[RMDB]
RNA sequence: GGGAACGACUCGAGUAGAGUCGAAAACUGAGCAUAAUGCCGCUGUUACCGGUCUUGUUGAUGGUGUGGGCUACCGCACAUAGCACUUCGCAGGCCACUUCUGCGUACUCGUCGUGGCUCGUUAUCAAAAAUAGGCACGUUUCGACGUGCCUAUUUUAAAAGAAACAACAACAACAAC
Reactivity to DMS in 0.01 (KOAc 150mM, MgCl2 10mM, bicine 150mM(pH8.5), 24C), signal-to-noise 2, nucleotides 027 to 126: c030u000g000a090g020c050a110u000a060a080u000g010c060c030g010c060u000g000u000u010a070c100c020g010g020u010c030u000u010g020u010u000g010a080u000g000g010u000g000u000g030g000g010c100u000a060c120c000g040c090a030c050a090u010a140g010c050a110c140u000u000c100g030c030a060g010g010c120c050a060c140u000u000c050u000g020c070g020u000a050c040u000c070g000u010c040g070u000g000g000c000u000c040g020u000u010a090u000c150a050
Chemical mapping of a 177-nucleotide RNA with DMS.
For DMS, 1,481 sequencing reads were counted.
The data come from the RNA Mapping Database (RMDB), library OK2TST.